[RMDB]
RNA sequence: GGGAACGACUCGAGUAGAGUCGAAAAGAGCUGGUCGGCUAUAUCGGACUAGCGGACACCGCACGGCCAUCCUCGCGUCCGUUGAUCGAAGCGUUGGUAACCGCCGGCCGCAACGUGGUACUGAUAACGUAGGAAAAUUAUUCGUAAUUUUCCUACGAAAAGAAACAACAACAACAAC
Reactivity to 2A3 in 0.01 (KOAc 150mM, MgCl2 10mM, bicine 150mM(pH8.5), 24C), signal-to-noise 8, nucleotides 027 to 126: g060a010g000c080u090g010g020u020c010g030g000c050u070a030u030a050u300c050g040g020a020c020u010a020g010c000g000g000a030c060a040c040c040g010c040a050c060g030g000c020c020a070u060c030c020u040c030g020c020g030u000c020c010g030u040u110g090a160u130c040g030a070a010g030c020g070u080u070g040g030u060a070a050c030c030g000c010c020g010g010c010c010g000c010a020a020c020g060u090g030g050u100a100c040u060g070a120u080a200a040
Reactivity to DMS in 0.01 (KOAc 150mM, MgCl2 10mM, bicine 150mM(pH8.5), 24C), signal-to-noise 9, nucleotides 027 to 126: g010a130g020c030u010g050g010u000c020g010g010c090u010a160u010a080u000c040g010g010a050c040u000a080g010c040g010g000a070c130a120c080c060g020c160a150c090g010g010c050c050a120u000c030c030u000c080g010c090g000u000c020c030g010u000u000g010a080u000c050g010a100a120g000c070g010u000u000g010g010u000a080a130c120c100g010c070c020g000g010c020c020g020c040a040a060c120g010u000g010g020u000a100c090u000g000a080u010a080a200